[RMDB]
RNA sequence: GGGAACGACUCGAGUAGAGUCGAAAAGAUGUGUCGACGAACACGUUCAAACAGUGCGAUUUGCUACGCAUGCAGAAAUCCCUACGAAGUGUGUGGAAACACACUCUAGGGCACAGCGAAGCUGAGCCCCCAUUUUGAGUUUCGACUCAAAAUGGGGAAAAGAAACAACAACAACAAC
Reactivity to 2A3 in 0.01 (KOAc 150mM, MgCl2 10mM, bicine 150mM(pH8.5), 24C), signal-to-noise 9, nucleotides 027 to 126: g060a030u060g020u000g010u030c060g180a300c060g020a150a010c020a010c030g030u100u090c070a070a100a090c050a070g060u030g100c030g060a110u070u050u250g010c010u020a020c020g010c030a050u100g020c010a010g120a070a120a060u090c000c010c000u010a030c090g120a200a040g000u000g000u000g000u020g070g200a130a190a010c000a000c000a000c000u000c000u010a010g000g010g000c030a010c020a030g010c030g070a070a010g000c020u020g030a020g020c010
Reactivity to DMS in 0.01 (KOAc 150mM, MgCl2 10mM, bicine 150mM(pH8.5), 24C), signal-to-noise 9, nucleotides 027 to 126: g010a040u000g010u000g010u000c030g020a150c240g020a120a040c010a020c020g010u000u010c100a120a110a110c150a110g020u000g010c020g000a180u010u010u010g010c050u000a070c040g010c020a070u000g020c130a100g010a060a090a120u010c010c000c000u000a030c200g010a080a040g020u000g020u000g010u000g000g030a170a140a020c000a010c000a000c000u000c010u000a020g000g010g020c300a030c080a060g010c030g010a120a060g020c030u000g010a080g000c110